[RMDB]
RNA sequence: GGGAACGACUCGAGUAGAGUCGAAAACAGGCAAUUGUACAUACUUUUAAGUCUUAAAAUUUUUGCUGGGCAUAAUGGCUUACAAUUGUAAUCUCAGCACUUUGGGAGGCUAAGACAGGAGGAUCACUUGAGGCCAGGAGUUCAAGGCCAGCCUGGGACGGAAAGUGUAAUUCGUUACACUUUCCGUAAAAGAAACAACAACAACAAC
Reactivity to DMS in 0.01 (KOAc 150mM, MgCl2 10mM, bicine 150mM(pH8.5), 24C), signal-to-noise 1, nucleotides 027 to 156: c040a120g030g030c000a050a020u000u030g000u000a060c110a150u010a050c030u000u000u000u000a060a100g030u000c030u040u000a040a100a130a210u010u000u000u050u000g020c030u000g020g020g020c110a130u000a030a050u000g010g000c030u010u000a030c000a030a090u000u000g040u010a050a070u000c020u010c020a050g070c040a050c130u000u010u010g030g000g020a040g000g030c030u000a020a070g000a020c080a080g010g020a070g000g000a040u000c020a050c030u000u010g000a120g000g030c030c040a070g040g020a070g050u000u000c060a060a070g020g020c020c010a080g000c020c000u000g020g040g010
Reactivity to 2A3 in 0.01 (KOAc 150mM, MgCl2 10mM, bicine 150mM(pH8.5), 24C), signal-to-noise 3, nucleotides 027 to 156: c020a000g080g000c020a050a070u030u060g020u090a050c020a120u220a120c090u150u180u110u180a100a020g000u020c010u090u120a160a230a290a300u150u220u080u140u120g050c040u050g000g020g000c030a050u050a160a040u160g030g000c020u060u030a040c030a060a100u080u070g050u130a100a140u040c020u000c030a000g040c050a020c040u100u060u020g020g010g050a020g000g000c000u030a020a020g030a030c000a000g010g020a010g010g030a040u060c010a010c060u030u070g030a010g030g010c040c000a010g010g040a020g010u040u070c070a080a010g020g000c010c000a000g010c000c010u030g010g000g010

Structure probing data (DMS and 2A3) for a 207-nucleotide construct. It was measured as part of the RMDB library OK3TST. The DMS profile rests on 2,351 reads. Conditions: 150 mM KOAc, 10 mM MgCl2 and 150 mM bicine (pH 8.5), 24 C. High DMS reactivity at an A or C suggests that its Watson-Crick edge is free.